[RMDB]
Chemical mapping of a 177-nucleotide RNA with DMS and 2A3.
RNA sequence: GGGAACGACUCGAGUAGAGUCGAAAAUCUUAGCGUUUCGACGCUAAGAAAACGUGGUGGAGGAGGUGGAAAGCUCGGCAUUAAAGGGAUAAAAACAUCUUGAUAUAGGGUCGUUCGCGACCCUAAACAAACGAUCUAGAUUCGUCUAGAUCGUUUGAAAAGAAACAACAACAACAAC
Reactivity to DMS in 0.01 (KOAc 150mM, MgCl2 10mM, bicine 150mM(pH8.5), 24C), signal-to-noise 5, nucleotides 027 to 126: u000c000u000u000a000g010c010g020u000u010u020c180g020a050c010g020c000u000a000a010g000a030a050a090a100c110g010u010g010g010u000g010g010a080g010g000a070g000g010u000g000g000a060a070a090g010c050u000c100g010g010c060a090u000u010a050a080a100g000g010g000a100u020a040a050a080a090a080c160a050u000c060u010u000g000a130u010a120u000a020g010g010g010u000c000g020u000u010c160g000c010g010a010c000c000c000u000a000a030a100
Reactivity to 2A3 in 0.01 (KOAc 150mM, MgCl2 10mM, bicine 150mM(pH8.5), 24C), signal-to-noise 3, nucleotides 027 to 126: u000c000u000u000a000g000c000g010u000u060u080c200g090a000c000g000c000u010a000a000g000a000a000a000a010c060g070u080g000g050u090g010g040a080g000g020a050g030g050u100g010g000a040a030a000g020c030u040c030g040g010c030a000u100u150a090a040a070g070g000g020a060u130a110a140a010a020a020c040a080u100c030u060u110g090a030u060a000u040a180g000g000g000u010c010g020u020u020c120g000c000g050a030c000c040c000u010a000a010a000
The reactions ran in a buffer of 150 mM KOAc, 10 mM MgCl2 and 150 mM bicine (pH 8.5), at 24 C.
Values cover nucleotides 27 to 126.
Source: RMDB library M2PK50, as collected in RNAgym.